Structure probing data (2A3 and DMS) for a 177-nucleotide construct. The RNA was probed in 150 mM KOAc, 10 mM MgCl2 and 150 mM bicine (pH 8.5) at 24 C.
RNA sequence: GGGAACGACUCGAGUAGAGUCGAAAAGUAUAUGCCUACCCUACGCAACUGGGCGUACUCCUUGCAAUGGACUUUUUACAGUUCCUACUUAUCCGGUUUUAACGCUGUUUUAUUGGCGCAAAGGUUUACUGAUAACGAUUUUCGAAUCGUUAUCAGUAAAAGAAACAACAACAACAAC
Reactivity to 2A3 in 0.01 (KOAc 150mM, MgCl2 10mM, bicine 150mM(pH8.5), 24C), signal-to-noise 9, nucleotides 027 to 126: g050u050a080u020a020u230g040c000c000u050a070c020c000c010u040a030c030g010c050a090a080c100u080g040g010g000c020g010u010a060c030u010c020c010u040u070g030c050a060a130u110g020g040a030c000u060u060u040u040u130a090c100a050g000u040u040c010c010u020a100c030u100u090a070u080c020c000g070g000u030u010u070u130a040a020c020g000c010u010g140u060u090u050u090a110u090u140g020g000c020g000c070a080a070a060g030g000u010u010u010
Reactivity to DMS in 0.01 (KOAc 150mM, MgCl2 10mM, bicine 150mM(pH8.5), 24C), signal-to-noise 4, nucleotides 027 to 126: g000u000a070u030a080u000g010c020c020u000a070c070c020c030u010a050c090g010c070a060a080c180u020g020g000g020c040g020u000a050c080u010c040c030u000u030g010c120a110a090u000g000g010a040c030u010u020u020u000u000a070c150a090g010u000u000c000c010u010a070c080u030u010a060u010c070c050g020g000u000u010u000u010a070a140c060g000c020u000g000u030u020u030u010a090u030u040g010g000c030g040c070a020a100a080g010g030u010u000u000